[RMDB]
RNA sequence: GGGAACGACUCGAGUAGAGUCGAAAAGAUAUGGACAGAGCUUUUGACGCUUAUGCAUCGGAAACGAUGUGCAUAAGCGAUAAGCUCGUCCUAAGUCAAAACCCUAUGCUGUUCGCAGCAUAGGGAAGGUAGUAAAGUUGUUCGCAACUUUACUACCAAAAGAAACAACAACAACAAC
Reactivity to 2A3 in 0.01 (KOAc 150mM, MgCl2 10mM, bicine 150mM(pH8.5), 24C), signal-to-noise 7, nucleotides 027 to 126: g010a010u070a030u100g020g000a010c150a180g000a180g000c010u110u110u160u240g210a140c050g000c000u010u000a010u020g000c000a010u030c010g040g000a030a030a030c040g050a070u140g070u070g110c010a010u000a020a000g000c000g000a000u000a000a000g000c000u000c000g000u000c000c000u010a100a010g030u010c010a020a040a080a280c000c000c000u000a000u000g000c000u010g070u080u100c300g010c180a000g000c000a000u000a000g020g000g000a010a010
Reactivity to DMS in 0.01 (KOAc 150mM, MgCl2 10mM, bicine 150mM(pH8.5), 24C), signal-to-noise 5, nucleotides 027 to 126: g000a030u000a300u000g010g020a010c000a090g040a000g010c000u000u000u010u010g020a190c070g020c000u000u010a000u000g020c000a040u000c020g010g000a100a060a180c000g010a030u010g010u010g020c010a010u000a000a000g020c010g010a020u000a010a010g010c000u000c010g020u000c000c000u000a010a040g000u000c040a090a070a080a130c000c000c000u000a000u000g010c000u000g010u000u010c220g030c010a010g010c000a000u000a010g000g010g000a000a000